[RMDB]
An RNA of 177 nucleotides, treated with 2A3 and DMS and read out base by base. The 2A3 profile rests on 1,248 reads. 2A3 adducts were read by reverse transcription with SuperScript II with manganese. The RNA was probed in 150 mM KOAc, 10 mM MgCl2 and 150 mM bicine (pH 8.5) at 24 C. DMS adducts were read by reverse transcription with MarathonRT.
RNA sequence: GGGAACGACUCGAGUAGAGUCGAAAAAAGAUAUGGAUCUUCGAGAGCUUGGAUUUAUGGGUGCAUGGUAUGUCGGAAACGACAUAUCUGUGAUGCCCAUUGUCAGCUCUUUCGGAUCCUAAGUCAAGAAUACAAAAAUCUUCGGAUUUUUGUAUUCAAAAGAAACAACAACAACAAC
Reactivity to 2A3 in 0.01 (KOAc 150mM, MgCl2 10mM, bicine 150mM(pH8.5), 24C), signal-to-noise 1, nucleotides 027 to 126: a010a050g080a060u060a060u140g000g010a000u010c030u050u040c080g000a000g030a010g020c110u300u300g200g000a120u190u300u300a020u080g010g040g010u030g000c000a010u010g000g010u010a000u000g000u020c020g030g070a080a060a020c030g000a020c020a010u000a020u000c010u030g110u030g080a300u170g050c000c000c070a010u000u000g000u010c010a030g020c020u020c000u000u020u000c000g000g040a010u000c000c000u000a190a000g020u000c020a100a010
Reactivity to DMS in 0.01 (KOAc 150mM, MgCl2 10mM, bicine 150mM(pH8.5), 24C), signal-to-noise 1, nucleotides 027 to 126: a100a090g020a040u010a300u000g000g010a010u000c000u000u000c250g010a010g010a010g000c010u000u000g030g010a020u000u010u000a000u000g010g030g020u000g020c010a040u010g000g020u000a000u010g010u000c010g000g010a110a090a280c000g000a000c010a010u000a000u000c000u040g080u000g020a130u010g040c010c010c010a010u010u010g010u000c000a060g000c000u000c010u000u010u010c190g000g020a000u010c010c010u000a040a140g010u010c060a100a170